RNA sequence: GGGAACGACUCGAGUAGAGUCGAAAACAGUCUUGGUUUAUGGGACUCUUAGUGCCAGUGUGGCCCAGGGGUGGACACGGUGGAUCCUGAACCAGAGGAUGCAGAUCUCACACGGGUGAGGGCCCCCUCAUAGUUCUCACUGGGCAGGGUCUGCUCACGGUAGUUUUAUGUUCGCAUAAAACUACCGAAAAGAAACAACAACAACAAC
Reactivity to 2A3 in 0.01 (KOAc 150mM, MgCl2 10mM, bicine 150mM(pH8.5), 24C), signal-to-noise 2, nucleotides 027 to 156: c030a020g070u050c010u080u210g060g020u080u110u100a150u200g000g010g070a070c010u070c050u130u090a110g030u040g120c040c020a100g030u020g000u060g050g020c020c050c060a050g050g040g000g010u130g050g010a010c030a020c120g000g000u020g000g000a010u080c020c020u020g020a080a040c020c010a010g010a060g140g000a000u060g000c020a010g000a090u010c050u060c040a030c010a030c130g160g050g000u040g020a000g000g070g010c030c000c000c010c000u120c060a150u170a040g030u100u010c000u000c010a010c030u020g000g000g070c000a000g000g000g000u000c020u040g040c000u070c020a020
An RNA of 207 nucleotides, treated with 2A3 and read out base by base. For 2A3, 834 sequencing reads were counted. It was measured as part of the RMDB library OK3TST. The RNA was probed in 150 mM KOAc, 10 mM MgCl2 and 150 mM bicine (pH 8.5) at 24 C.